[RMDB]
RNA sequence: GGGAACGACUCGAGUAGAGUCGAAAAUAGCUGCAACAUUAUUUGAGUAUCCUGAAAACGGGCUUUUCAGAAUGGUGUUGCCGUAUAAAAUUGUAGGAGUGCAUAGUGGCCCGUAUAUCAGGCAUUAGAGAGCUACAGAUGUUCGCAUCUGUAGCAAGUACUAUGCACCGUUCGCGGUGCAUAGUACAAAAGAAACAACAACAACAAC
Reactivity to DMS in 0.01 (KOAc 150mM, MgCl2 10mM, bicine 150mM(pH8.5), 24C), signal-to-noise 1, nucleotides 027 to 156: u000a100g000c020u000g010c010a070a030c040a050u000u000a050u000u000u010g000a220g040u010a080u000c000c010u000g010a040a050a070a070c040g020g040g040c120u010u010u030u000c020a110g010a050a050u050g000g010u000g000u010u000g010c000c080g000u000a150u000a050a060a080a070u010u000g010u000a080g030g030a180g020u000g030c060a080u010a160g000u000g000g010c010c000c040g020u000a070u020a120u000c080a040g050g000c040a040u000u000a070g020a170g000a190g020c010u000a000c000a000g010a010u000g020u000u000c300g010c010a020u000c000u000g010u000a000g010c000a000a020
Reactivity to 2A3 in 0.01 (KOAc 150mM, MgCl2 10mM, bicine 150mM(pH8.5), 24C), signal-to-noise 3, nucleotides 027 to 156: u090a000g020c010u000g040c010a000a020c000a030u070u070a070u070u130u040g060a030g040u130a050u130c000c010u010g050a010a040a040a040c030g000g000g010c000u100u090u100u090c060a060g030a120a060u060g010g020u010g020u010u010g000c000c000g010u050a050u080a100a090a070a070u230u210g030u110a050g000g070a040g070u100g020c030a050u030a090g050u120g080g000c000c000c000g000u010a040u000a010u040c000a000g000g060c000a000u010u100a010g030a040g000a040g080c000u000a000c000a020g000a000u000g060u050u100c190g030c080a000u000c010u000g020u010a000g000c000a000a000
The record gives the reactivity of an RNA of 207 nucleotides to DMS and 2A3. The DMS profile rests on 2,842 reads. It was measured as part of the RMDB library M2RFPK. For DMS the reverse transcriptase was MarathonRT. For 2A3 the reverse transcriptase was SuperScript II with manganese. The RNA was probed in 150 mM KOAc, 10 mM MgCl2 and 150 mM bicine (pH 8.5) at 24 C.